[RMDB]
An RNA of 177 nucleotides, treated with 2A3 and DMS and read out base by base. It was measured as part of the RMDB library M2PK50. The reactions ran in a buffer of 150 mM KOAc, 10 mM MgCl2 and 150 mM bicine (pH 8.5), at 24 C.

RNA sequence: GGGAACGACUCGAGUAGAGUCGAAAAAGCCAAUCCUUCGGGAUUGGCUACAGCAACGAAGCAAAGCAACGUGACAAGACGAGCAAAAGAUCGAGCAUGCUACACACCCCAUCUUCGGAUGGGGUAAUCGAUAGGAAAGAUUCGUCUUUCCUAUCGAAAAAGAAACAACAACAACAAC
Reactivity to 2A3 in 0.01 (KOAc 150mM, MgCl2 10mM, bicine 150mM(pH8.5), 24C), signal-to-noise 5, nucleotides 027 to 126: a000g000c010c000a000a000u010c010c010u030u080c240g060g010g000a010u010u010g000g000c000u000a000c000a010g020c010a040a070c040g090a070a010g030c030a120a040a000g010c020a040a180c050g030u030g070a080c050a090a040g070a050c030g030a010g050c030a020a050a050a050g060a020u040c010g010a010g050c040a030u060g030c020u090a050c060a000c010a010c070c010c000c000a000u000c010u030u040c180g060g000a000u010g000g000g000g000u000a000a010
Reactivity to DMS in 0.01 (KOAc 150mM, MgCl2 10mM, bicine 150mM(pH8.5), 24C), signal-to-noise 7, nucleotides 027 to 126: a040g020c000c000a000a000u000c000c000u000u010c220g040g010g010a020u000u000g010g010c000u000a000c070a050g010c050a060a070c060g000a100a080g010c040a060a080a080g010c050a040a060c090g010u000g000a100c110a070a090g010a080c080g000a120g000c040a040a050a060a080g010a060u000c060g010a110g000c070a070u000g000c070u000a070c110a100c190a070c000c000c000c000a000u000c000u000u010c200g020g010a010u000g010g000g000g010u000a000a010